[RMDB]
RNA sequence: GGGAACGACUCGAGUAGAGUCGAAAAGCGGUUCCCUGUACUCGAAAUCCGCUUUAUGCGAGGCUUAAUUCCUUUGUUGAGGCCGUAUUUUUGCGAAGUCUGCCCAAAGCACGUAGUGUUUGAAGAUUUCGGUCCUAUGCAAUAUGAACCCAUGAACCGUGUUAAAUCAGUUCGCUGAUUUAACACGAAAAGAAACAACAACAACAAC
Reactivity to 2A3 in 0.01 (KOAc 150mM, MgCl2 10mM, bicine 150mM(pH8.5), 24C), signal-to-noise 4, nucleotides 027 to 156: g020c020g030g020u030u040c030c010c020u040g140u060a130c080u110c070g050a050a060a060u040c000c000g040c000u020u070u040a080u100g060c030g060a030g060g000c040u040u070a040a020u190u130c010c000u080u080u140g060u040u070g060a040g060g000c010c000g000u010a140u020u110u000u110u090g020c000g010a040a010g040u030c020u020g050c020c020c040a060a070a000g060c020a020c060g170u140a100g030u020g030u040u050u090g030a040a000g020a040u040u040u030c010g000g010u030c010c010u050a060u100g000c000a000a010u040a020u180g040a050a050c010c010c030a030u060g030a040a010c040
Reactivity to DMS in 0.01 (KOAc 150mM, MgCl2 10mM, bicine 150mM(pH8.5), 24C), signal-to-noise 3, nucleotides 027 to 156: g010c030g000g010u010u000c010c010c000u010g030u000a050c090u000c030g010a060a050a070u000c020c000g010c010u000u000u000a110u020g010c060g010a060g030g000c040u010u010a060a090u000u000c020c010u010u010u010g050u010u040g000a140g010g070c030c030g030u000a030u000u010u000u000u010g070c000g000a060a060g010u000c020u020g020c030c030c060a070a060a080g020c020a050c040g000u000a110g030u010g010u010u000u010g000a090a080g010a110u000u000u000c030g020g020u000c040c040u010a070u000g030c080a060a110u010a100u010g000a090a110c010c010c020a130u000g010a080a150c180
Structure probing data (2A3 and DMS) for a 207-nucleotide construct. The reactions ran in a buffer of 150 mM KOAc, 10 mM MgCl2 and 150 mM bicine (pH 8.5), at 24 C.